[RMDB]
RNA sequence: GGGAACGACUCGAGUAGAGUCGAAAAGAGACUCGGCGAAGAGUGCAAGAGCAUAAGAUAGGCUGACAGUGUCCUACACAACGAGGGACGCUGACGCGAAAGCGUGGUCUAGCGAACCAAUUAGGCUUAACGGCACCAUUUUCGAAUGGUGCCGUUAAAAAGAAACAACAACAACAAC
Reactivity to 2A3 in 0.01 (KOAc 150mM, MgCl2 10mM, bicine 150mM(pH8.5), 24C), signal-to-noise 1, nucleotides 027 to 126: g200a000g000a030c000u020c010g020g000c000g010a050a050g060a030g120u070g060c020a080a020g000a010g140c050a050u070a150a040g110a090u130a040g010g110c020u070g060a050c000a000g000u000g000u040c000c000u120a050c030a000c000a160a240c130g110a190g060g020g000a000c000g050c010u000g000a000c060g010c030g050a000a030a000g080c060g000u000g000g000u000c000u010a020g010c020g030a000a030c000c000a000a060u080u050a070g040g020c000u000
Reactivity to DMS in 0.01 (KOAc 150mM, MgCl2 10mM, bicine 150mM(pH8.5), 24C), signal-to-noise 1, nucleotides 027 to 126: g010a010g000a040c010u000c000g000g010c000g000a200a200g040a040g000u020g000c120a100a080g000a000g000c050a000u000a070a000g000a120u000a040g000g080c050u000g000a300c080a000g080u030g000u000c000c000u000a020c150a080c300a070a050c240g000a300g000g000g000a080c000g020c020u000g040a150c000g000c030g000a130a070a200g010c000g000u000g020g020u010c040u000a120g000c140g000a070a000c050c100a100a220u000u000a070g000g030c000u000

An RNA of 177 nucleotides, treated with 2A3 and DMS and read out base by base. It was measured as part of the RMDB library RFM100. For DMS, 868 sequencing reads were counted. Reactivities are given for positions 27 through 126. The reactions ran in a buffer of 150 mM KOAc, 10 mM MgCl2 and 150 mM bicine (pH 8.5), at 24 C.